[RMDB]
Structure probing data (2A3 and DMS) for a 207-nucleotide construct. The reactions ran in a buffer of 150 mM KOAc, 10 mM MgCl2 and 150 mM bicine (pH 8.5), at 24 C.

RNA sequence: GGGAACGACUCGAGUAGAGUCGAAAAACUGCAUCUACGGAUGCAGAACUACGUUCAUCAAAUUUAUUUGGACGCAUGAAAUGAGAAUAGGGAACGGGAUUCUCAUACGCAGGCUACGGCCUGCGAAAAAACUCCUUAUGCUUCGGCAUAAGGAGAACACAGGGAGUAAGUUCGCUUACUCCCUGUGAAAAGAAACAACAACAACAAC
Reactivity to 2A3 in 0.01 (KOAc 150mM, MgCl2 10mM, bicine 150mM(pH8.5), 24C), signal-to-noise 2, nucleotides 027 to 156: a000c010u030g000c000a000u000c000u000a020c210g120g010a010u010g000c000a000g020a010a000c020u090a050c000g000u000u010c000a050u020c030a080a170a220u200u300u170a100u040u120u090g000g010a000c020g040c120a080u130g160a060a090a100u020g010a050g020a030a010u060a150g040g020g060a050a030c060g050g000g030a010u000u010c000u000c020a010u050a040c040g000c010a000g000g000c000u010a030c250g090g000c020c000u000g030c000g060a060a030a000a010a010a010c000u000c000c010u010u000a000u000g010c000u020u080c180g120g000c000a000u000a000a000g010g000a000g000a000a010
Reactivity to DMS in 0.01 (KOAc 150mM, MgCl2 10mM, bicine 150mM(pH8.5), 24C), signal-to-noise 1, nucleotides 027 to 156: a160c000u000g000c000a000u000c020u000a110c230g080g000a000u000g000c020a020g010a020a090c000u000a010c010g050u000u000c000a000u020c070a150a180a240u000u000u000a110u070u000u000g010g010a010c000g060c000a000u000g020a140a100a040u000g000a150g030a100a030u000a250g010g010g000a090a070c110g020g010g000a300u000u000c000u000c010a040u000a120c000g060c000a030g000g020c000u010a130c290g050g020c000c020u000g040c000g110a000a010a010a030a040a010c000u000c000c000u000u000a010u000g000c020u010u000c240g020g020c000a000u000a000a000g070g010a020g020a030a000
Description: Source: RMDB library M2RFOK, as collected in RNAgym.